[RMDB]
RNA sequence: GGGAACGACUCGAGUAGAGUCGAAAAGACGCCUGUGUGGCGAAGCGAGCAUGCGAAAGAGCCGCACAGUCCAUCUUAUAUAAAGCGGCCAGAUGGAUUGCUCGCCAAAAGAUCCAUAUCACUGAGACGAUCGGUAUAGGUUCGCCUAUACCGAUCGAAAAGAAACAACAACAACAAC
Reactivity to 2A3 in 0.01 (KOAc 150mM, MgCl2 10mM, bicine 150mM(pH8.5), 24C), signal-to-noise 3, nucleotides 027 to 126: g090a030c020g040c010c010u080g060u040g070u100g080g000c030g000a030a000g000c000g020a020g000c040a040u120g020c030g050a110a080a070g080a070g010c010c010g000c020a070c060a040g020u000c000c000a030u010c020u180u140a140u040a050u060a160a110a000g030c040g040g060c010c020a060g000a050u030g040g020a030u020u020g000c000u000c010g010c020c000a010a190a000a030g020a040u000c000c000a030u060a050u180c040a060c120u120g050a010g010a130
Reactivity to DMS in 0.01 (KOAc 150mM, MgCl2 10mM, bicine 150mM(pH8.5), 24C), signal-to-noise 2, nucleotides 027 to 126: g020a130c170g010c100c000u000g000u010g030u020g010g000c020g000a090a210g020c000g000a020g000c050a070u000g000c190g010a150a140a110g000a300g030c010c030g000c020a090c130a010g000u000c040c110a050u010c080u000u010a100u000a080u080a060a020a130g010c020g010g040c000c130a020g020a040u050g000g000a000u010u000g000c000u010c000g040c000c120a050a070a080a120g000a060u000c010c060a000u030a090u000c050a080c050u030g020a100g040a190